[RMDB]
The record gives the reactivity of an RNA of 207 nucleotides to 2A3 and DMS. The data come from the RNA Mapping Database (RMDB), library OK3TST. For 2A3 the reverse transcriptase was SuperScript II with manganese. DMS adducts were read by reverse transcription with MarathonRT. For 2A3, 6,463 sequencing reads were counted.

RNA sequence: GGGAACGACUCGAGUAGAGUCGAAAAGAUCUCACGAUCGUACGUACGUACGAGUGAGUGAGUGUGUGUGAACGUGUGAGAGAGUUCGAUCUCGUUCGAACACGAACACGUGAGAUCACGUGAGUGUACGUACACGAGUACACACGUUCGUGUACGAGCGUGCUUAUACUUUCGAGUAUAAGCACGCAAAAGAAACAACAACAACAAC
Reactivity to 2A3 in 0.01 (KOAc 150mM, MgCl2 10mM, bicine 150mM(pH8.5), 24C), signal-to-noise 6, nucleotides 027 to 156: g020a050u040c010u000c010a000c010g080a100u030c010g000u000a000c020g120u160a030c170g000u000a000c010g010a020g040u100g050a040g010u030g020a110g010u070g000u000g000u010g010u020g020a060a000c010g010u010g000u020g020a060g000a010g010a020g040u120u050c030g020a080u030c090u030c160g110u140u020c010g010a020a000c020a000c030g010a030a010c020a000c000g000u020g010a080g010a040u150c030a010c090g040u090g060a160g040u120g030u080a050c010g000u010a000c010a000c010g000a000g010u030a040c040a000c000a000c030g010u010u020c010g000u010g010u030a010c020g010a010
Reactivity to DMS in 0.01 (KOAc 150mM, MgCl2 10mM, bicine 150mM(pH8.5), 24C), signal-to-noise 3, nucleotides 027 to 156: g020a080u000c010u010c000a020c040g000a100u000c000g030u000a010c000g010u010a150c180g050u000a020c010g000a070g010u000g020a130g000u020g010a210g030u010g010u000g010u000g060u000g030a040a060c030g020u000g020u010g020a300g010a160g000a190g030u010u000c060g020a190u000c090u000c100g000u000u000c020g010a090a030c020a070c010g000a140a080c000a080c000g030u010g010a090g020a080u000c000a080c060g010u000g020a140g020u000g010u000a070c000g000u000a060c030a060c010g010a070g000u000a100c040a080c110a060c070g000u000u000c020g010u030g010u000a020c040g020a160